[RMDB]
RNA sequence: GGGAACGACUCGAGUAGAGUCGAAAAUUCACAACACUGCUGCUGCACAACCAUGGCGACGGCACAAUCAUUAGGCUAAUAACACUUAUUUGCAUUCUUAUCAUGCCGGCAGCUCUCCCUUAAACACGUAAUACAAUCACUUCGGUGAUUGUAUUACAAAAGAAACAACAACAACAAC
Reactivity to 2A3 in 0.01 (KOAc 150mM, MgCl2 10mM, bicine 150mM(pH8.5), 24C), signal-to-noise 4, nucleotides 027 to 126: u040u020c030a030c020a110a090c040a040c060u090g010c020u020g010c000u030g000c020a020c020a120a070c060c020a090u110g040g000c020g020a040c010g020g010c020a000c020a040a030u070c030a040u060u060a020g060g020c030u100a020a030u090a160a070c210a040c180u100u060a050u050u060u030g010c020a040u040u050c000u040u100a090u090c020a010u060g020c010c000g010g010c010a010g000c010u020c010u000c010c030c000u030u160a100a130a020c100a010c100
Reactivity to DMS in 0.01 (KOAc 150mM, MgCl2 10mM, bicine 150mM(pH8.5), 24C), signal-to-noise 3, nucleotides 027 to 126: u000u020c040a110c080a080a080c120a080c100u010g010c010u000g010c010u000g010c080a060c100a070a090c130c090a070u020g020g010c000g010a130c070g010g000c010a040c060a060a060u000c110a040u000u000a040g000g020c040u000a040a040u000a050a050c180a090c120u000u000a070u010u000u000g000c060a070u000u000c040u000u000a090u010c120a090u000g020c020c010g000g020c060a050g000c040u000c040u010c010c000c030u000u000a080a080a100c210a090c200

Notes
Chemical mapping of a 177-nucleotide RNA with 2A3 and DMS. The 2A3 profile rests on 4,641 reads. For 2A3 the reverse transcriptase was SuperScript II with manganese. For DMS, 2,164 sequencing reads were counted. Conditions: 150 mM KOAc, 10 mM MgCl2 and 150 mM bicine (pH 8.5), 24 C. The data come from the RNA Mapping Database (RMDB), library RFMREP.